Source information
Structure probing data (2A3 and DMS) for a 177-nucleotide construct. DMS adducts were read by reverse transcription with MarathonRT. The data come from the RNA Mapping Database (RMDB), library TTRDEL. For 2A3 the reverse transcriptase was SuperScript II with manganese. The 2A3 profile rests on 1,149 reads.
[RMDB]
RNA sequence: GGGAACGACUCGAGUAGAGUCGAAAAGAAACGAUAUGGAUCUCUAGCGUGCCCGAGGAUCUGUUAUGUAAGUGGGUCGGAAACGACCCAUUAUGUAAACAGGGAGGGUCGGGUCCUAAGUCAAAAAUCAAUUGUUUUGGUUCGCCAAAACAAUUGAAAAAGAAACAACAACAACAAC
Reactivity to 2A3 in 0.01 (KOAc 150mM, MgCl2 10mM, bicine 150mM(pH8.5), 24C), signal-to-noise 1, nucleotides 027 to 126: g000a040a140a000c040g030a030u030a090u200g060g000a070u040c090u040c160u280a170g110c070g300u290g040c060c000c010g040a300g000g000a000u000c030u010g020u060u020a050u050g050u020a070a150g300u180g070g010g010u010c060g000g000a150a070a050c060g000a010c000c000c020a000u010u010a000u000g000u030a000a080a000c000a000g000g000g050a000g010g000g040u000c000g040g000g000u020c040c010u030a260a000g080u030c070a100a070a030a030a070
Reactivity to DMS in 0.01 (KOAc 150mM, MgCl2 10mM, bicine 150mM(pH8.5), 24C), signal-to-noise 2, nucleotides 027 to 126: g000a130a070a060c050g000a080u030a300u010g000g020a020u000c010u000c110u010a150g030c140g010u010g000c000c010c000g030a110g010g000a000u000c000u000g000u010u000a030u000g000u000a000a030g020u020g020g000g010u010c000g000g000a110a040a230c000g010a000c020c000c000a000u000u000a010u010g000u000a010a050a030c000a000g010g020g020a090g000g030g010u000c000g010g000g020u010c000c020u000a040a170g000u010c030a020a060a040a080a100